Structure probing data (2A3 and DMS) for a 177-nucleotide construct. The data come from the RNA Mapping Database (RMDB), libraries RFM100 and RFMREP. Conditions: 150 mM KOAc, 10 mM MgCl2 and 150 mM bicine (pH 8.5), 24 C. For 2A3 the reverse transcriptase was SuperScript II with manganese. DMS (dimethyl sulfate) methylates the pairing face of unpaired adenines and cytosines.
[RMDB]
RNA sequence: GGGAACGACUCGAGUAGAGUCGAAAAGAACCAUCUAGUAGCUGGUUCCCUCCGAAAUUUCCCUCAGGAUAGCAGCAACUUAUUUACGAUAGUUUUAUGAGGUAAAGCGAAUGAUUAGAGGAUUCGGGACAUGAAUGCAAUUCGUUGCAUUCAUGUCAAAAGAAACAACAACAACAAC
Reactivity to 2A3 in 0.01 (KOAc 150mM, MgCl2 10mM, bicine 150mM(pH8.5), 24C), signal-to-noise 9, nucleotides 027 to 126: g020a010a020c000c010a010u020c020u050a120g160u140a020g110c040u020g010g000u020u020c020c000c000u010c000c010g020a030a040a050u080u090u070c020c010c000u010c010a020g140g000a050u040a040g040c050a000g000c000a030a060c010u030u030a040u070u070u030a030c060g140a220u100a200g060u040u010u050u060a030u050g030a020g060g060u190a090a040a020g030c020g030a090a070u050g070a120u070u090a040g020a010g040g000a000u030u000c010g000g000
Reactivity to DMS in 0.01 (KOAc 150mM, MgCl2 10mM, bicine 150mM(pH8.5), 24C), signal-to-noise 5, nucleotides 027 to 126: g000a050a060c000c020a050u010c040u000a170g020u020a140g000c140u000g000g000u000u000c010c010c030u010c010c010g020a020a070a130u020u010u020c100c010c010u000c050a040g000g000a050u020a080g010c040a080g010c130a080a090c010u010u000a040u000u010u000a050c040g010a120u020a080g000u010u010u010u010a020u010g010a020g000g010u020a060a130a100g020c020g010a060a090u020g000a070u010u010a100g010a080g000g020a170u010u000c010g000g000